Source: RMDB library TTRINS, as collected in RNAgym. Structure probing data (DMS) for a 177-nucleotide construct. Values are in units of 0.01, from 0 to 300, in steps of 10. Conditions: 150 mM KOAc, 10 mM MgCl2 and 150 mM bicine (pH 8.5), 24 C. DMS adducts were read by reverse transcription with MarathonRT. Values cover nucleotides 27 to 126.

[RMDB]
RNA sequence: GGGAACGACUCGAGUAGAGUCGAAAAGAUAUGGAGUUGUCAAAGACGAUUAACCUCCGAUAAGCUACAUUCGGAAACGAAUGUUAGCUUUUGACGGAGGAGAUCGUCUUUGACAACUCCUAAGUCACUUAGUUCACUUGUUCGCAAGUGAACUAAGAAAAGAAACAACAACAACAAC
Reactivity to DMS in 0.01 (KOAc 150mM, MgCl2 10mM, bicine 150mM(pH8.5), 24C), signal-to-noise 1, nucleotides 027 to 126: g010a040u010a300u000g020g010a020g000u010u000g030u010c000a000a030a000g010a030c000g010a000u020u000a160a180c010c010u000c010c000g020a120u000a020a000g010c020u000a020c000a000u000u000c000g000g010a130a090a300c000g020a020a000u000g010u020u010a000g020c000u000u000u000u000g020a260c120g010g000a000g000g010a180g000a000u000c000g000u000c010u000u000u000g000a010c010a000a000c000u000c000c000u000a000a070g000u000c060a220